[RMDB]
RNA sequence: GGGAACGACUCGAGUAGAGUCGAAAAGGCGAAUAUAGCGCAAUGGAAGGAUACCAUAAGCUACGAAGACGAGUUAGAAACGAAGGCACUCGAAUGGUAGUGCUCGCAAAGCUGCGACGAAGAGCCAAAAUUAAAUGUUAUUCGUAACAUUUAAUUUAAAAGAAACAACAACAACAAC
Reactivity to 2A3 in 0.01 (KOAc 150mM, MgCl2 10mM, bicine 150mM(pH8.5), 24C), signal-to-noise 9, nucleotides 027 to 126: g050g000c020g040a080a020u150a020u050a130g030c020g000c080a030a040u020g010g010a060a060g100g040a040u060a140c000c010a010u010a070a030g000c010u020a020c040g050a030a000g050a020c030g000a010g040u060u080a040g070a050a070a010c040g040a070a020g050g000c020a010c020u030c020g070a070a060u090g050g010u060a020g020u010g030c020u010c010g000c010a050a080a020g030c040u060g020c020g020a030c020g050a070a030g020a010g050c000c000a010
Reactivity to DMS in 0.01 (KOAc 150mM, MgCl2 10mM, bicine 150mM(pH8.5), 24C), signal-to-noise 9, nucleotides 027 to 126: g000g010c010g010a100a100u020a150u010a060g010c030g010c090a110a050u010g000g010a130a100g010g020a160u030a060c030c030a040u010a070a170g000c020u010a030c080g010a090a060g010a070c040g000a080g010u010u010a060g010a070a070a080c080g010a090a080g000g000c040a030c030u000c020g020a110a090u020g000g010u020a030g010u000g010c050u010c030g000c070a040a080a090g000c050u010g000c030g010a060c060g010a070a060g010a160g000c020c040a050